This 177-nucleotide RNA was probed chemically with 2A3 and DMS.
It was measured as part of the RMDB library OK2TST.
Values cover nucleotides 27 to 126.
The RNA was probed in 150 mM KOAc, 10 mM MgCl2 and 150 mM bicine (pH 8.5) at 24 C.
DMS adducts were read by reverse transcription with MarathonRT.
2A3 adducts were read by reverse transcription with SuperScript II with manganese.
[RMDB]
RNA sequence: GGGAACGACUCGAGUAGAGUCGAAAAUGGGUAAAGUUCAUGCGUGAUUCUCCCGUUGCCAGGACAGAAUCAAUCCGGUGGCAACCGCAUUACGCGGGCCUUCGCUGGCGCGGAUAUUGCCGCGACCUGACCAUCGCUAAUUCGUUAGCGAUGGUCAAAAAGAAACAACAACAACAAC
Reactivity to 2A3 in 0.01 (KOAc 150mM, MgCl2 10mM, bicine 150mM(pH8.5), 24C), signal-to-noise 1, nucleotides 027 to 126: u090g010g000g030u090a100a100a090g040u080u070c030a040u140g000c000g050u050g040a030u090u030c070u000c000c020c040g030u050u110g010c000c000a010g030g000a020c030a110g180a110a070u110c090a020a070u030c030c020g120g110u050g010g000c030a070a110c020c020g000c010a030u140u240a030c130g000c000g070g010g090c000c000u070u070c050g070c110u000g020g000c050g000c000g000g000a050u060a100u180u140g080c020c010g010c010g010a090c000c030
Reactivity to DMS in 0.01 (KOAc 150mM, MgCl2 10mM, bicine 150mM(pH8.5), 24C), signal-to-noise 2, nucleotides 027 to 126: u000g000g030g010u000a050a060a110g020u000u000c040a040u000g080c070g030u000g040a060u000u010c040u010c080c040c090g050u000u000g020c060c030a160g000g000a090c170a100g010a050a180u010c140a110a180u000c040c020g030g020u010g000g000c020a030a060c000c040g010c060a080u000u010a060c090g010c000g000g000g020c030c010u000u000c060g030c070u010g010g000c020g010c020g000g000a110u000a040u010u000g040c010c010g000c030g000a030c060c030